Structure probing data (DMS) for a 177-nucleotide construct.
RNA sequence: GGGAACGACUCGAGUAGAGUCGAAAAAAAAGAUAUGGAGCGUGUGGAGACGCUGUGGACGACGAAGAGUCUCGGAAACGAGACUCAGAGUCCACUAGCGUCGUUGAAACACGCUCCUAAGUCAAAAUCAGAGUAGUGAGUUCGCUCACUACUCUGAAAAAGAAACAACAACAACAAC
Reactivity to DMS in 0.01 (KOAc 150mM, MgCl2 10mM, bicine 150mM(pH8.5), 24C), signal-to-noise 2, nucleotides 027 to 126: a070a020a070a050g010a020u000a300u000g010g000a010g010c010g000u000g000u000g000g000a060g000a030c020g010c010u010g000u000g000g010a030c020g000a100c200g020a120a120g000a020g000u000c000u010c000g040g000a090a130a140c000g060a020g000a020c000u000c010a010g000a180g000u000c000c000a010c000u000a020g000c010g020u000c000g010u020u050g000a190a070a030c000a000c000g010c000u000c000c000u000a010a080g010u000c010a110a040a110a130

The RNA was probed in 150 mM KOAc, 10 mM MgCl2 and 150 mM bicine (pH 8.5) at 24 C.
It was measured as part of the RMDB library TTRDES.
DMS adducts were read by reverse transcription with MarathonRT.